RNA sequence: GGGAACGACUCGAGUAGAGUCGAAAAGAUAUGGACGUGCAAGGGAGUCGACUCGGAAACGAGCGACAUCGAUCUUGACACGUCCUAAGUCAAAACAAACAGGAUGUCUUCGGACAUCCUGUUUGAAUCAUGCACGAUCCUUCGGGAUCGUGCAUGAAAAAGAAACAACAACAACAAC
Reactivity to DMS in 0.01 (KOAc 150mM, MgCl2 10mM, bicine 150mM(pH8.5), 24C), signal-to-noise 1, nucleotides 027 to 126: g010a020u000a300u000g000g010a010c030g030u020g000c000a030a000g000g020g000a060g020u000c000g000a110c000u000c000g020g020a060a090a140c000g020a010g000c010g020a040c000a090u000c170g000a040u000c000u000u000g010a170c000a000c000g000u000c010c000u020a000a060g010u020c010a080a100a140a280c000a000a010a000c000a010g000g000a000u010g000u000c000u000u030c170g000g000a000c000a000u000c000c000u000g000u010u000u000g010a080a120
Reactivity to 2A3 in 0.01 (KOAc 150mM, MgCl2 10mM, bicine 150mM(pH8.5), 24C), signal-to-noise 1, nucleotides 027 to 126: g030a010u020a050u150g030g020a020c000g000u000g010c010a030a010g030g080g000a010g000u000c000g120a300c020u000c100g010g040a100a040a010c010g000a000g000c040g000a000c000a000u150c000g130a030u030c000u000u040g180a150c000a000c010g000u000c000c000u000a010a000g020u010c010a040a020a060a140c010a010a000a000c000a000g000g000a000u010g000u000c000u040u290c300g040g020a000c010a000u000c000c020u000g000u000u000u000g000a000a000